Structure probing data (2A3) for a 207-nucleotide construct. Values cover nucleotides 27 to 156. The RNA was probed in 150 mM KOAc, 10 mM MgCl2 and 150 mM bicine (pH 8.5) at 24 C. Source: RMDB library ARCHII, as collected in RNAgym. For 2A3 the reverse transcriptase was SuperScript II with manganese. Values are in units of 0.01, from 0 to 300, in steps of 10.
[RMDB]
RNA sequence: GGGAACGACUCGAGUAGAGUCGAAAACCCGCCCUCACGCGAGUAGUCCGUGAAUUGGCGGCGGCGCGCUAAGCAAUGGAGGCGACCCUUGAGGGAAGCAAUUCUGCAGAGACUCCUCCACUCGCGGAUGGCGGCACCAGAUCACACCGGCGGUGCACUAACCGGUAUGGUUCGCCAUACCGGUUAGAAAAGAAACAACAACAACAAC
Reactivity to 2A3 in 0.01 (KOAc 150mM, MgCl2 10mM, bicine 150mM(pH8.5), 24C), signal-to-noise 2, nucleotides 027 to 156: c020c010c000g000c000c000c010u030c010a170c020g040c030g030a020g050u100a030g040u120c000c020g060u090g130a210a210u180u200g110g040c020g010g010c020g110g040c060g010c030g000c070u160a080a050g010c000a080a100u080g050g000a000g030g010c040g060a100c010c020c020u030u130g100a260g040g030g040a000a000g000c010a030a130u170u110c040u150g030c050a010g040a040g030a150c010u010c020c000u000c000c010a020c040u020c030g010c000g010g000a030u010g000g000c000g000g000c010a000c000c000a000g030a180u140c030a060c030a040c120c010g000g000c050g000g000u000g000c000a000